[RMDB]
RNA sequence: GGGAACGACUCGAGUAGAGUCGAAAACGCGCUGGGGGUGUACACGGUUUUGCCCCCGUAUCUGUGUAUUAUCUCUUGUUAUAGCGCUGGGAUAAGUGGAGUGGUGGCGGUCUGCGUUUGGCGGGCGGUGUAUUUAUUAAUUCGUUAAUAAAUACACAAAAGAAACAACAACAACAAC
Reactivity to 2A3 in 0.01 (KOAc 150mM, MgCl2 10mM, bicine 150mM(pH8.5), 24C), signal-to-noise 3, nucleotides 027 to 126: c040g010c000g000c030u040g000g000g000g000g010u030g000u020a010c030a010c010g020g000u000u000u050u150g040c000c000c000c000c000g000u010a000u000c010u020g010u000g010u010a020u090u080a020u010c000u000c000u030u070g080u050u110a150u100a080g020c010g000c010u040g010g010g040a060u040a090a010g030u020g030g000a060g010u050g020g020u020g010g000c020g000g000u030c030u020g010c020g030u030u040u070g070g010c020g010g000g020c020g010
Reactivity to DMS in 0.01 (KOAc 150mM, MgCl2 10mM, bicine 150mM(pH8.5), 24C), signal-to-noise 6, nucleotides 027 to 126: c120g000c030g020c040u010g000g020g000g000g030u010g010u010a020c020a030c000g000g000u000u020u010u030g010c030c000c010c000c020g000u030a010u010c020u010g010u010g000u000a010u000u050a030u000c010u000c010u000u020g020u030u030a120u030a060g010c020g020c010u000g000g000g000a080u020a040a000g010u010g000g000a120g010u020g000g010u020g000g000c060g010g010u010c030u010g010c040g010u010u010u010g010g010c040g010g010g020c060g000